An RNA of 177 nucleotides, treated with 2A3 and DMS and read out base by base.
Reactivities are given for positions 27 through 126.
Values are in units of 0.01, from 0 to 300, in steps of 10.
The DMS profile rests on 6,269 reads.
DMS adducts were read by reverse transcription with MarathonRT.

[RMDB]
RNA sequence: GGGAACGACUCGAGUAGAGUCGAAAAAACGCGUCCUCGCUGUGACACAACUGACCCAUUUUGUCAUGGCGCAAGGAGACAACGUAAUCAUCAACCUCAUCAUCCCUGUCGAGGUGGACCGGGUGGGCUGUAAGAGAACGUUCGCGUUCUCUUACAGAAAAGAAACAACAACAACAAC
Reactivity to 2A3 in 0.01 (KOAc 150mM, MgCl2 10mM, bicine 150mM(pH8.5), 24C), signal-to-noise 2, nucleotides 027 to 126: a020a000c070g010c030g060u010c000c000u010c000g000c000u010g000u010g010a000c010a000c010a010a070c030u090g130a130c000c010c020a020u030u050u030u010g010u000c010a010u010g020g000c020g000c030a020a030g040g030a020g040a050c020a060a000c070g090u090a090a020u080c060a040u030c030a030a060c010c010u020c020a090u050c000a080u060c020c000c030u040g030u090c100g000a040g070g000u050g040g000a020c050c040g060g000g040u110g020g020g020
Reactivity to DMS in 0.01 (KOAc 150mM, MgCl2 10mM, bicine 150mM(pH8.5), 24C), signal-to-noise 6, nucleotides 027 to 126: a060a040c060g010c100g000u000c010c010u000c020g020c000u000g020u000g000a000c010a010c080a020a020c040u010g020a090c030c020c020a300u000u000u000u000g010u000c000a000u000g010g020c020g010c210a080a020g000g020a090g000a140c110a060a060c030g020u000a050a070u000c090a080u000c070a090a060c030c020u000c020a080u010c100a120u010c010c010c020u000g010u000c150g010a070g000g020u000g010g000a060c110c070g020g020g010u000g010g010g000